An RNA of 177 nucleotides, treated with DMS and 2A3 and read out base by base. Conditions: 150 mM KOAc, 10 mM MgCl2 and 150 mM bicine (pH 8.5), 24 C. It was measured as part of the RMDB library OK1LIB. Reactivities are given for positions 27 through 126.
RNA sequence: GGGAACGACUCGAGUAGAGUCGAAAAGACGCCUGUGUGGCGAAGCGAGCAUGAGAAAGAGCCGCAAAUUAAACAGUCCAUCUAGCGGCAAGAUGGAUUGCUCGCAAAAAGAUCCAUAUCACUGAGACCGUAGCUACUGAUUCGUCAGUAGCUACGGAAAAGAAACAACAACAACAAC
Reactivity to DMS in 0.01 (KOAc 150mM, MgCl2 10mM, bicine 150mM(pH8.5), 24C), signal-to-noise 2, nucleotides 027 to 126: g000a260c050g000c000c080u000g020u080g000u070g000g010c000g040a100a120g050c000g020a050g000c000a000u020g010a300g000a040a070a050g030a230g100c000c010g000c000a110a020a120u040u010a110a070a150c160a070g000u010c040c000a110u000c000u020a230g040c050g000g000c000a000a020g000a110u000g000g000a170u050u000g030c000u030c040g010c000a000a020a040a040a080g000a040u040c000c000a040u000a040u030c050a050c140u000g000a080g050a230
Reactivity to 2A3 in 0.01 (KOAc 150mM, MgCl2 10mM, bicine 150mM(pH8.5), 24C), signal-to-noise 2, nucleotides 027 to 126: g010a020c020g070c030c020u240g100u060g060u140g160g000c010g040a000a040g000c000g000a000g000c010a050u180g030a030g050a170a100a000g110a060g030c000c000g060c100a050a170a020u180u200a090a050a030c050a000g090u000c020c020a000u000c000u070a050g000c000g000g050c020a000a000g000a000u030g020g000a000u000u010g000c040u000c000g000c000a000a000a090a000a000g050a010u000c010c000a010u090a040u150c080a050c120u050g140a010g100a140